Conditions: 150 mM KOAc, 10 mM MgCl2 and 150 mM bicine (pH 8.5), 24 C. The record gives the reactivity of an RNA of 177 nucleotides to DMS. High DMS reactivity at an A or C suggests that its Watson-Crick edge is free. The DMS profile rests on 652 reads. Reactivities are given for positions 27 through 126. For DMS the reverse transcriptase was MarathonRT. It was measured as part of the RMDB library OK2TST.
RNA sequence: GGGAACGACUCGAGUAGAGUCGAAAACAAAAUACCAAGUUAGUGUUAGGUGUGUUUUUAAAAAGUCAGAUGUAACACAAAACUGUCCUUUUACAAAUCAACCUUGUUUUGAUUCAGUUUUAAUUGCGUUCUUGAUAUGCUUCGGCAUAUCAAGAACAAAAGAAACAACAACAACAAC
Reactivity to DMS in 0.01 (KOAc 150mM, MgCl2 10mM, bicine 150mM(pH8.5), 24C), signal-to-noise 1, nucleotides 027 to 126: c050a020a070a130a180u010a130c120c050a110a030g000u000u020a240g020u000g000u000u000a050g000g010u000g010u000g000u000u040u000u010u030a020a090a060a120a050g010u000c020a020g000a020u010g010u000a020a040c020a060c050a020a080a020a080c020u000g000u020c050c050u000u000u000u000a060c120a030a010a010u000c060a020a030c180c090u000u010g020u000u010u000u000g000a020u000u000c220a110g020u000u000u020u000a090a120u000u020g000c300